[RMDB]
This 207-nucleotide RNA was probed chemically with 2A3.
RNA sequence: GGGAACGACUCGAGUAGAGUCGAAAAGGGUGAGACCUAGGAACCGUAGGGGUAUUCUCAAAGGAAGCUUUUGCAGUGACGCCCAUGUAAGUGGGAUAUCACAACAGAACUCGUAUGAGUAGCCUAAUAAAUCGGACCUUCUUCGGAAGGUCCGAAACAGCGUAUGGAAGUUCGCUUCCAUACGCUGAAAAGAAACAACAACAACAAC
Reactivity to 2A3 in 0.01 (KOAc 150mM, MgCl2 10mM, bicine 150mM(pH8.5), 24C), signal-to-noise 1, nucleotides 027 to 156: g000g070g000u090g040a110g050a050c010c010u030a110g080g020a110a040c020c010g010u070a100g050g000g000g000u030a090u100u030c000u000c080a090a060a010g110g020a010a100g000c020u050u060u040u030g020c030a010g000u000g040a010c020g020c030c010c010a000u050g040u150a150a120g020u020g000g000g000a030u010a050u070c010a010c000a000a160c010a040g000a020a000c040u040c020g100u190a110u130g010a030g110u040a010g030c000c000u050a120a070u090a210a080a070u020c000g000g000a000c000c000u000u000c010u080u080c130g000g000a000a000g000g020u000c000c000g010a000a000a000
Values cover nucleotides 27 to 156. The reactions ran in a buffer of 150 mM KOAc, 10 mM MgCl2 and 150 mM bicine (pH 8.5), at 24 C. The 2A3 profile rests on 597 reads.